[RMDB]
RNA sequence: GGGAACGACUCGAGUAGAGUCGAAAACCCAGCUUGCUUAGCCUGUAGAAUUUCUUUAGGAAAUCCUCUUUGCUGGGCCCCGAACCCCAGCUUGCUUAGCUUGUAGAAUUUCUUUAGGAAAUUCUCUGGACACACUGUGGUUCGCCACAGUGUGUCCAAAAGAAACAACAACAACAAC
Reactivity to 2A3 in 0.01 (KOAc 150mM, MgCl2 10mM, bicine 150mM(pH8.5), 24C), signal-to-noise 1, nucleotides 027 to 126: c000c000c010a000g050c020u000u040g020c030u080u050a000g070c040c050u040g080u160a010g000a020a020u000u050u020c010u070u220u140a030g040g040a000a000a000u010c000c000u030c020u070u170u120g000c000u000g000g010g000c020c010c000c020g240a130a090c020c000c000c000a010g000c000u000u000g000c000u060u110a050g000c000u040u060g020u100a000g010a040a010u050u010u010c000u070u230u120a030g000g080a000a000a000u000u000c010u030c040u020
Conditions: 150 mM KOAc, 10 mM MgCl2 and 150 mM bicine (pH 8.5), 24 C. An RNA of 177 nucleotides, treated with 2A3 and read out base by base. For 2A3 the reverse transcriptase was SuperScript II with manganese. The data come from the RNA Mapping Database (RMDB), library RFM100.